[RMDB]
RNA sequence: GGGAACGACUCGAGUAGAGUCGAAAAGUCCAUAGCGAUAGGAGGGGAUGCUAGGAGUCGGCGGCGACCGAAGCGAGGGGGAAAGUAAAGAGAGCAACGGGGCUAGCGAGUGGAUGUUCCGCCUCCCAAAUCUGUGUGUUCGCACACAGAAAAAGAAACAACAACAACAAC
Reactivity to 2A3 in 0.01 (KOAc 150mM, MgCl2 10mM, bicine 150mM(pH8.5), 24C), signal-to-noise 9, nucleotides 027 to 129: g030u000c010c000a070u100a030g060c050g070a070u090a120g010g020a040g000g030g000g020a020u060g010c030u030a030g010g020a050g060u070c050g010g010c010g020g030c050g020a050c000c000g020a030a000g030c040g030a060g010g000g000g000g010a030a000a010g040u100a020a060a010g050a000g010a000g030c010a020a070c050g010g000g020g040c010u020a020g010c010g030a030g030u070g010g030a050u050g040u080u010c020c020g010c010c010u010c020c010c000a030a080a050
Reactivity to DMS in 0.01 (KOAc 150mM, MgCl2 10mM, bicine 150mM(pH8.5), 24C), signal-to-noise 8, nucleotides 027 to 129: g000u040c030c000a060u050a060g050c060g040a110u010a070g020g020a070g020g020g050g020a060u050g000c090u000a040g000g000a070g020u000c090g020g000c160g020g020c130g000a060c040c000g030a100a060g030c150g030a000g000g020g000g020g040a000a030a040g030u050a060a070a070g020a060g030a000g040c090a020a050c110g020g030g020g020c090u030a040g030c000g020a000g060u050g010g040a030u080g000u010u010c020c030g030c060c000u000c020c010c020a020a050a080
Structure probing data (2A3 and DMS) for a 170-nucleotide construct. For 2A3 the reverse transcriptase was SuperScript II with manganese.